[RMDB]
RNA sequence: GGGAACGACUCGAGUAGAGUCGAAAAGUGCUGUCUUAAGACACUAAGUGUGUGGUAAUUUGUUACACACCAGUAAAAUCUAAAACAAUAGCCUUUCCAACUAAGAAAGUCAUGUUUUAAGAAACAACUCAUCAUAUGAGUUCGCUCAUAUGAUGAGAAAAGAAACAACAACAACAAC
Reactivity to 2A3 in 0.01 (KOAc 150mM, MgCl2 10mM, bicine 150mM(pH8.5), 24C), signal-to-noise 7, nucleotides 027 to 126: g050u040g030c050u030g050u080c040u160u220a130a080g040a040c010a010c050u050a080a060g040u020g000u000g000u020g070g030u070a180a300u120u170u220g080u050u050a010c010a000c000a000c000c010a030g040u130a020a090a020a060u020c010u020a020a010a010a000c010a040a120u040a130g000c000c000u000u000u000c030c030a110a130c110u110a080a040g010a030a000a000g030u030c010a020u030g040u000u000u010u030a140a070g020a030a100a010c020a020a020
Reactivity to DMS in 0.01 (KOAc 150mM, MgCl2 10mM, bicine 150mM(pH8.5), 24C), signal-to-noise 7, nucleotides 027 to 126: g000u000g020c060u000g020u000c080u000u020a130a120g010a080c040a030c030u000a090a150g000u000g020u000g020u000g000g010u010a080a130u020u020u010g020u000u000a050c000a010c000a010c010c090a100g020u010a070a060a120a080u000c020u000a010a010a000a020c020a030a080u000a190g030c120c000u000u000u000c010c070a090a150c230u010a080a100g000a020a030a020g010u000c040a100u000g010u000u000u000u000a040a100g010a050a080a080c180a050a110
Structure probing data (2A3 and DMS) for a 177-nucleotide construct. The DMS profile rests on 7,406 reads. High 2A3 reactivity points to a flexible backbone, as in loops and unpaired stretches. The reactions ran in a buffer of 150 mM KOAc, 10 mM MgCl2 and 150 mM bicine (pH 8.5), at 24 C.